[RMDB]
RNA sequence: GGGAACGACUCGAGUAGAGUCGAAAACUUUUUAUCAGUGUACAGCUCCUUGCAUUCGCGAUUGUGCGAAAAAAAAGAAUGCAGACAAAACUAACUGACAAAAUGCCAUAUGUUUGUGCGCGAUAAGACCAGGAUAGUAGUUCGCUACUAUCCUGGUAAAAGAAACAACAACAACAAC
Reactivity to 2A3 in 0.01 (KOAc 150mM, MgCl2 10mM, bicine 150mM(pH8.5), 24C), signal-to-noise 5, nucleotides 027 to 126: c010u040u090u000u050u070a060u030c060a110g000u030g010u030a030c020a020g000c020u020c020c020u100u090g000c010a040u020u030c020g090c060g220a300u230u160g070u180g090c060g060a130a010a000a000a000a000a000a010g100a040a000u070g020c000a010g090a080c080a020a180a020a000c030u080a050a030c050u070g090a020c060a010a100a020a020u130g000c050c040a080u080a040u180g060u020u110u050g030u010g010c010g010c000g030a010u010a100a030g030
Reactivity to DMS in 0.01 (KOAc 150mM, MgCl2 10mM, bicine 150mM(pH8.5), 24C), signal-to-noise 2, nucleotides 027 to 126: c010u000u020u050u000u000a100u000c040a040g060u000g000u000a070c100a050g010c060u000c070c070u010u020g010c090a050u000u000c040g020c110g020a080u020u050g000u040g020c100g000a020a000a000a020a060a130a030a080g010a050a010u010g000c010a010g010a080c070a090a000a060a110c100u000a070a110c070u000g000a040c060a040a010a020a000u030g000c030c030a030u040a080u000g010u000u010u020g010u000g020c080g010c020g000a090u020a060a050g000